[RMDB]
RNA sequence: GGGAACGACUCGAGUAGAGUCGAAAAAAUCAAAGGAACUAAGCAAAGGCGGCAAAAUGAUCGAAUCUCCGUUUUGCUUCCCCGCCGUGACCAGUGGACGCAGUGGCCGGGGUAGGAGGGAGAGAAAAAAUACGAUGCCAUUCGUGGCAUCGUAUUUAAAAGAAACAACAACAACAAC
Reactivity to DMS in 0.01 (KOAc 150mM, MgCl2 10mM, bicine 150mM(pH8.5), 24C), signal-to-noise 3, nucleotides 027 to 126: a040a050u040c070a030a100a070g000g000a060a050c100u010a040a050g020c080a030a060a070g000g030c080g000g000c140a050a020a030a050u020g000a050u020c070g000a110a170u020c020u000c000c000g000u040u020u000u010g000c050u000u000c000c010c000c070g000c000c020g000u000g000a090c060c030a120g040u030g000g010a110c130g000c020a060g020u010g020g010c080c070g000g010g010g010u020a050g000g000a070g010g000g000a030g020a040g020a000a010a040
Reactivity to 2A3 in 0.01 (KOAc 150mM, MgCl2 10mM, bicine 150mM(pH8.5), 24C), signal-to-noise 3, nucleotides 027 to 126: a000a000u240c120a080a040a020g160g010a050a090c090u040a060a050g010c030a140a050a020g050g000c000g020g000c030a000a090a080a180u280g070a120u120c060g090a020a070u020c000u000c010c000g060u050u030u020u030g100c000u030u040c000c000c000c030g050c060c020g100u040g050a060c010c060a110g000u120g040g100a050c080g000c040a030g020u150g160g000c130c020g010g030g010g010u070a030g030g010a070g000g050g000a060g030a000g050a010a100a000